Structure probing data (2A3) for a 207-nucleotide construct.

[RMDB]
RNA sequence: GGGAACGACUCGAGUAGAGUCGAAAAGGGGUCUCGAACGUGAGGAGCUUCUACAGAGCUUGGAUUUACAUGGCUGAAGCCUCCACGGCCAUGUUGUCAGCUCUGUUCUAGCUCCUCUCGAGACGGAGGCACCCAAAGCCCUGGUUCGCCAGGGCAAGCCUAUGACGUUCUUCGGAACGUCAUAGGCAAAAGAAACAACAACAACAAC
Reactivity to 2A3 in 0.01 (KOAc 150mM, MgCl2 10mM, bicine 150mM(pH8.5), 24C), signal-to-noise 2, nucleotides 027 to 156: g050g000g020g010u000c010u000c020g050a180a060c100g100u060g010a000g010g000a010g000c010u130u060c050u110a000c000a010g000a020g040c040u180u300g090g000a060u160u260u290a030c020a000u000g000g000c000u030g030a230a010g030c010c060u000c000c000a040c010g030g010c030c000a000u000g000u010u010g000u020c000a000g000c000u010c000u000g010u000u000c010u020a000g010c000u000c000c000u000c000u000c000g010a020g000a000c000g030g000a000g010g000c060a300c040c000c020a100a020a010g020c000c000c010u000g000g030u050u050c200g020c000c000a020g000g050g010c090a010a000
For 2A3 the reverse transcriptase was SuperScript II with manganese. It was measured as part of the RMDB library RNAMAK. The reactions ran in a buffer of 150 mM KOAc, 10 mM MgCl2 and 150 mM bicine (pH 8.5), at 24 C. For 2A3, 1,270 sequencing reads were counted.